[RMDB]
RNA sequence: GGGAACGACUCGAGUAGAGUCGAAAAUGCUUAUGCGUUGCACACGCUUAGCGACGAAUUUCCAAUUGUGCACAAUGUUAUUGAAUUUGCGCAGGCUGCGGGCAAUCCGAACCGCUUCUGGUUCAUGAGCUCUACCUCCAAGAUUACCCACGCUGGAGGACGCAGUAUUAUUCGUAAUACUGCGUCCAAAAGAAACAACAACAACAAC
Reactivity to DMS in 0.01 (KOAc 150mM, MgCl2 10mM, bicine 150mM(pH8.5), 24C), signal-to-noise 1, nucleotides 027 to 156: u000g020c030u000u000a040u010g040c060g040u000u010g070c040a030c070a210c010g030c020u000u000a080g040c000g000a300c140g010a150a110u000u000u010c030c010a180a140u000u000g000u000g010c010a070c160a140a120u000g000u010u000a080u000u010g020a070a170u010u000u000g000c000g000c000a110g020g040c030u000g040c010g120g000g010c060a050a080u020c040c050g010a050a050c030c020g020c170u000u000c110u000g010g010u020u000c020a090u000g030a130g010c030u000c060u000a080c030c030u000c020c120a080a000g010a140u000u000a060c010c020c010a040c160g010c000u010g000g000a300
Reactivity to 2A3 in 0.01 (KOAc 150mM, MgCl2 10mM, bicine 150mM(pH8.5), 24C), signal-to-noise 4, nucleotides 027 to 156: u130g000c010u120u110a050u180g010c000g030u040u060g000c020a000c000a000c000g010c000u010u010a010g010c020g070a090c080g100a150a150u020u030u020c000c000a010a080u090u030g000u010g050c000a000c060a020a150u190g090u300u160a140u140u190g070a080a060u050u030u150g060c080g000c040a050g070g030c080u070g040c100g010g010g010c020a030a060u090c040c070g010a020a010c020c000g070c110u110u070c070u140g010g000u010u030c040a060u110g020a030g000c000u000c010u040a030c000c010u020c030c020a040a010g020a120u040u120a090c010c020c030a070c090g070c030u010g000g010a040

Notes:
This 207-nucleotide RNA was probed chemically with DMS and 2A3. As a SHAPE reagent, 2A3 marks flexible, mostly unpaired nucleotides at the ribose 2'-OH. For DMS the reverse transcriptase was MarathonRT.